[RMDB]
RNA sequence: GGGAACGACUCGAGUAGAGUCGAAAAAUGCUGUGUCAGGGCAUUUAAAUGAUUUCCUGUGAACGCACCAUGUGCGCUUAACCCUGCACAAACUCACCAGCCACAUAGCCUUGACAUUUCUUUCCACAGCUUGGCCACAUUUGGCUGGCCUUAACAGCGCUAAGCUGACGUUCGCGUCAGCUUAGCGAAAAGAAACAACAACAACAAC
Reactivity to 2A3 in 0.01 (KOAc 150mM, MgCl2 10mM, bicine 150mM(pH8.5), 24C), signal-to-noise 2, nucleotides 027 to 156: a000u050g000c050u060g000u020g110u170c060a000g010g050g000c050a030u080u150u300a120a200a080u170g150a110u030u000u000c030c000u050g080u090g110a130a000c030g000c010a000c050c130a110u270g030u060g000c000g050c030u000u210a080a080c000c000c000u030g000c000a000c020a080a060a070c090u090c010a030c050c020a000g000c060c000a090c000a040u050a050g010c000c000u030u010g030a130c000a020u140u120u040c070u090u260u050c120c000a150c120a130g000c000u030u050g000g080c000c050a020c000a170u050u000u030g000g000c000u000g000g010c000c000u080u090a080a020c030a010g090